Description: The record gives the reactivity of an RNA of 177 nucleotides to 2A3 and DMS. For 2A3 the reverse transcriptase was SuperScript II with manganese. For DMS the reverse transcriptase was MarathonRT. High DMS reactivity at an A or C suggests that its Watson-Crick edge is free.
RNA sequence: GGGAACGACUCGAGUAGAGUCGAAAAGAUAUGGAUGUAUCCCAUCGAACGAAGAACGCUAUCGGAAACGAUAGCGGGAGUUCGUGGGAGUACAUCCUAAGUCAAAAGUAGCACUUCGGUGCUACAACACAGUAGAUGACUUCGGUCAUCUACUGUGAAAAGAAACAACAACAACAAC
Reactivity to 2A3 in 0.01 (KOAc 150mM, MgCl2 10mM, bicine 150mM(pH8.5), 24C), signal-to-noise 3, nucleotides 027 to 126: g060a030u110a060u200g000g000a000u010g010u030a010u020c000c020c020a070u300c150g010a000a020c010g100a300a100g010a070a030c000g000c010u000a000u000c000g020g040a140a070a040c010g010a010u000a010g000c000g020g000g000a030g000u000u030c020g010u010g000g000g010a030g020u030a000c000a000u000c000c000u010a110a000g070u020c040a000a010a100a150g000u010a010g000c000a000c030u060u100c300g120g000u020g000c000u000a000c000a010a010
Reactivity to DMS in 0.01 (KOAc 150mM, MgCl2 10mM, bicine 150mM(pH8.5), 24C), signal-to-noise 3, nucleotides 027 to 126: g020a020u010a300u010g000g020a020u010g020u010a070u000c000c010c000a040u020c060g020a000a000c000g000a120a180g000a110a240c010g010c000u000a030u000c000g000g030a130a110a250c000g000a020u000a000g000c000g000g000g010a070g000u000u000c000g030u010g000g000g000a030g030u000a000c000a000u000c000c000u000a000a110g000u000c040a100a130a110a150g010u000a010g010c010a010c000u000u010c230g010g010u000g030c000u000a000c000a110a230